[RMDB]
An RNA of 207 nucleotides, treated with 2A3 and read out base by base.
For 2A3 the reverse transcriptase was SuperScript II with manganese.
For 2A3, 434 sequencing reads were counted.
RNA sequence: GGGAACGACUCGAGUAGAGUCGAAAACCUCACUACAUUUUUCUGUUCCUAAAGAAUUUGUGACAGGUACAGUAAAACGUAUUGCAAGGUUUAUCAGUUCCUAUAAACAGGUAAAUAACAAUAUAUGAAAAGCAAAGACUGUUCGCAGUCUUUGCAACUCGAAGACUACGUUCGCGUAGUCUUCGAGAAAAGAAACAACAACAACAAC
Reactivity to 2A3 in 0.01 (KOAc 150mM, MgCl2 10mM, bicine 150mM(pH8.5), 24C), signal-to-noise 1, nucleotides 027 to 156: c000c000u000c000a000c010u000a010c000a060u000u000u030u000u040c000u050g040u040u000c030c000u060a150a170a080g080a230a260u230u260u170g140u040g050a110c180a040g000g020u000a040c010a000g000u040a000a000a000a000c090g030u000a000u000u010g020c000a000a000g020g010u000u000u060a100u090c010a030g000u000u000c000c000u000a030u090a040a170a000c070a060g000g110u020a040a060a060u150a040a020c030a050a060u120a030u090a000u290g130a010a080a030a000g010c000a000a000a000g000a000c000u000g030u030u030c160g000c060a000g000u000c000u000u000u010g000c000a000a000